[RMDB]
RNA sequence: GGGAACGACUCGAGUAGAGUCGAAAAGAGCGUCGAGAGACGAAGAGAAGUGCAUAGAUCCACAACGGAGAACGUAAUAAUGCACACAUGUGGGUUAGUGUCCGGAACAACGGGCACAAGAGGCAGACAGUCCAUAUUAGUUCGCUAAUAUGGACUGAAAAGAAACAACAACAACAAC
Reactivity to 2A3 in 0.01 (KOAc 150mM, MgCl2 10mM, bicine 150mM(pH8.5), 24C), signal-to-noise 9, nucleotides 027 to 126: g050a020g030c010g010u010c020g020a020g010a000g000a070c040g030a090a010g060a010g030a220a030g020u010g020c010a020u040a070g090a110u010c010c010a060c050a180a090c150g040g010a090g030a150a020c060g030u040a030a040u090a100a020u120g020c020a010c000a000c010a050u080g030u070g040g060g010u050u080a040g010u010g000u000c010c010g030g030a070a070c090a090a060c060g000g000g000c000a000c010a000a010g040a020g020g020c020a000g010a080
Reactivity to DMS in 0.01 (KOAc 150mM, MgCl2 10mM, bicine 150mM(pH8.5), 24C), signal-to-noise 9, nucleotides 027 to 126: g010a090g010c000g020u010c010g000a210g000a200g010a030c020g020a080a080g010a120g020a110a080g010u000g000c020a020u010a070g000a130u010c010c010a080c150a090a080c120g000g010a120g010a090a080c090g000u010a060a070u020a070a030u010g000c020a010c030a100c150a080u010g020u010g010g000g000u010u000a090g000u000g010u000c000c000g000g020a140a110c290a150a150c020g010g010g000c010a000c000a030a020g000a070g000g010c050a050g000a260
The record gives the reactivity of an RNA of 177 nucleotides to 2A3 and DMS. Source: RMDB library OK1LIB, as collected in RNAgym. For DMS the reverse transcriptase was MarathonRT. Reactivities are given for positions 27 through 126.